Structure probing data (DMS and 2A3) for a 177-nucleotide construct. The DMS profile rests on 5,257 reads. Reactivities are rounded to 0.1 and cut off at 0 and 3.
RNA sequence: GGGAACGACUCGAGUAGAGUCGAAAAUGGGCGCGUUCGGCGACGCGCUGCAGCGCUCGCGCCGUGAUGGCGUGGGUAUCGGUGACCGGAGGACCGUACGGCGACAGCGACGGAUCGCAGUGCGUCAAGGAUAUACUGGGUUCGCCCAGUAUAUCCUAAAAGAAACAACAACAACAAC
Reactivity to DMS in 0.01 (KOAc 150mM, MgCl2 10mM, bicine 150mM(pH8.5), 24C), signal-to-noise 3, nucleotides 027 to 126: u000g000g010g000c020g010c020g020u000u000c060g010g000c100g010a040c010g000c010g010c010u000g020c160a120g000c050g010c020u010c070g030c020g010c000c010g010u010g020a100u010g010g000c020g050u010g000g010g010u000a030u010c050g010g020u000g000a110c030c020g010g010a140g020g000a070c010c000g010u010a060c070g000g000c020g010a120c070a040g000c010g010a100c090g000g000a120u010c080g010c010a050g010u000g000c000g010u000c050a110
Reactivity to 2A3 in 0.01 (KOAc 150mM, MgCl2 10mM, bicine 150mM(pH8.5), 24C), signal-to-noise 4, nucleotides 027 to 126: u110g030g000g020c030g000c000g020u060u060c040g100g020c040g000a000c010g020c010g000c000u010g040c010a000g030c010g010c000u010c030g000c010g000c000c020g060u140g080a170u300g000g020c020g040u040g000g030g020u100a090u120c030g070g020u060g050a060c030c010g060g080a110g050g100a070c020c000g020u060a020c030g060g010c050g050a070c020a020g000c020g120a130c030g080g060a050u120c030g000c000a000g020u010g020c000g000u000c030a020